Record summary:
Chemical mapping of a 177-nucleotide RNA with 2A3. For 2A3 the reverse transcriptase was SuperScript II with manganese. The 2A3 profile rests on 458 reads. Values cover nucleotides 27 to 126. 2A3 is a SHAPE reagent: it acylates the 2'-hydroxyl of flexible nucleotides of all four kinds.

[RMDB]
RNA sequence: GGGAACGACUCGAGUAGAGUCGAAAAGAAGCUACUAACAGGGUGGCGACAGUAAGUAUGAGUUUCAUUUUUUAGUCUCCUAUAAGAAAAAUAUAUUGACAAUAUAACUCUUCUAGCUGGUUUGACUCUCCUUAGCCUUUUUCGAAAGGCUAAGGAGAAAAGAAACAACAACAACAAC
Reactivity to 2A3 in 0.01 (KOAc 150mM, MgCl2 10mM, bicine 150mM(pH8.5), 24C), signal-to-noise 1, nucleotides 027 to 126: g130a020a040g090c030u010a020c000u020a290a070c060a140g100g020g000u020g010g000c000g000a020c030a000g000u110a120a000g010u050a030u130g000a020g000u010u070u110c050a050u070u050u060u000u000u080a040g050u000c020u050c000c020u110a060u030a270a060g100a030a070a010a040a000u050a020u020a010u100u080g100a020c010a070a010u050a000u010a300a000c000u000c000u000u000c000u000a020g000c010u070g020g000u030u040u030g080a100c040u010